[RMDB]
RNA sequence: GGGAACGACUCGAGUAGAGUCGAAAAGAUAUGGACGCUUUAUGGGAGCCUGUCGGAAACGACAAGGGCUUUGAUCAUAUGGCGUCCUAAGUCAAAAGUAAGACAAUCCUUCGGGAUUGUCUUACAAGUAUACGGUAUACUUCGGUAUACCGUAUACAAAAGAAACAACAACAACAAC
Reactivity to DMS in 0.01 (KOAc 150mM, MgCl2 10mM, bicine 150mM(pH8.5), 24C), signal-to-noise 4, nucleotides 027 to 126: g010a020u000a160u010g000g000a020c010g010c000u000u000u010a000u000g000g000g010a020g000c000c000u000g000u000c000g010g000a040a040a070c000g010a000c000a060a100g020g020g010c000u010u000u020g010a110u000c000a010u000a010u000g000g010c000g010u000c000c000u000a000a030g010u000c020a120a070a120a160g000u000a000a000g010a020c000a020a010u000c000c000u000u010c220g040g010g010a010u000u010g000u010c000u000u000a000c010a030a100
Reactivity to 2A3 in 0.01 (KOAc 150mM, MgCl2 10mM, bicine 150mM(pH8.5), 24C), signal-to-noise 4, nucleotides 027 to 126: g010a010u040a010u060g000g010a000c000g000c010u100u040u020a040u030g260g170g010a010g000c000c030u020g020u000c010g000g040a050a010a020c010g010a000c100a130a140g170g030g000c020u130u090u160g140a120u200c000a000u000a000u020g000g010c000g000u000c000c000u000a000a000g010u000c010a090a010a030a110g000u000a000a000g000a010c000a000a000u000c020c030u050u160c300g030g000g000a000u000u010g010u000c000u000u000a000c000a000a000
Record summary: An RNA of 177 nucleotides, treated with DMS and 2A3 and read out base by base. The DMS profile rests on 6,974 reads. The RNA was probed in 150 mM KOAc, 10 mM MgCl2 and 150 mM bicine (pH 8.5) at 24 C. Values cover nucleotides 27 to 126.